[RMDB]
RNA sequence: GGGAACGACUCGAGUAGAGUCGAAAAUUUAUCUGCCAAAACGGGACCUCUGUUGAGGUAUAACCAAUAUUCCGUACUAAGGAUUUCGGUCCGGAACGUCUAGAGACUACACGGCAGACCAAUUUUGAUAACAAACGGUUUUCGAACCGUUUGUUAUAAAAGAAACAACAACAACAAC
Reactivity to DMS in 0.01 (KOAc 150mM, MgCl2 10mM, bicine 150mM(pH8.5), 24C), signal-to-noise 5, nucleotides 027 to 126: u010u030u030a140u020c000u000g000c010c000a050a000a020a030c020g000g010g010a020c000c000u000c000u020g030u010u020g000a020g000g000u000a010u000a010a170c260c120a020a020u010a110u030u030c010c000g000u000a020c010u000a050a010g010g000a020u000u000u050c120g010g000u000c000c010g000g000a020a010c120g000u000c020u010a070g020a060g010a050c040u000a050c230a080c110g000g000c000a000g000a040c100c160a060a030u010u010u000u000g000
Reactivity to 2A3 in 0.01 (KOAc 150mM, MgCl2 10mM, bicine 150mM(pH8.5), 24C), signal-to-noise 6, nucleotides 027 to 126: u020u040u020a030u000c010u000g020c000c010a010a000a000a000c010g000g000g020a000c010c000u020c030u080g280u250u280g040a000g000g010u010a000u010a010a020c000c010a000a000u110a130u300u080c000c000g010u000a010c000u000a000a020g000g000a010u030u010u190c300g060g010u000c010c000g000g030a010a000c060g000u000c020u050a060g010a010g030a130c030u050a030c070a000c030g000g000c000a000g000a000c000c010a020a030u030u040u030u100g060

An RNA of 177 nucleotides, treated with DMS and 2A3 and read out base by base. Source: RMDB libraries RFM100 and RFMREP, as collected in RNAgym. DMS adducts were read by reverse transcription with MarathonRT.